Overview:
Structure probing data (DMS and 2A3) for a 177-nucleotide construct. The reactions ran in a buffer of 150 mM KOAc, 10 mM MgCl2 and 150 mM bicine (pH 8.5), at 24 C. The data come from the RNA Mapping Database (RMDB), libraries RFM100 and RFMREP.
RNA sequence: GGGAACGACUCGAGUAGAGUCGAAAAUCCUACAGCUAAUACGUAGCCAAUCCUUUAGGGGAUGUAGCAUAUUAGUUUGAACAAUCGGCACAUUUUUGAUGUGUGAAUUAUGAGAAAUUUUAUGCACAUUUCAUAUCCCUUUCGAGGGAUAUGAAAUAAAAGAAACAACAACAACAAC
Reactivity to DMS in 0.01 (KOAc 150mM, MgCl2 10mM, bicine 150mM(pH8.5), 24C), signal-to-noise 7, nucleotides 027 to 126: u000c010c000u000a120c190a120g010c020u010a020a100u000a040c190g030u000a070g010c100c180a130a060u010c000c000u000u010u040a120g020g000g010g000a020u000g010u010a120g020c010a060u000a010u000u010a010g010u000u010u000g020a170a070c160a050a030u010c120g000g020c000a020c000a010u000u010u040u020u050g000a010u000g010u000g000u000g010a070a040u010u010a060u020g000a220g010a030a040a070u010u000u010u000a030u010g010c070a110c150
Reactivity to 2A3 in 0.01 (KOAc 150mM, MgCl2 10mM, bicine 150mM(pH8.5), 24C), signal-to-noise 9, nucleotides 027 to 126: u010c000c000u020a050c020a010g000c000u010a000a010u020a050c090g110u080a030g010c030c030a080a070u020c010c010u090u100u190a130g050g010g000g000a000u010g050u050a020g000c010a000u000a010u020u000a010g040u030u050u230g060a060a030c070a100a090u100c040g140g020c000a010c010a010u030u040u070u140u300g110a040u030g010u000g010u030g060a070a100u150u130a110u260g080a050g190a060a100a060u150u130u090u100a100u200g040c040a040c010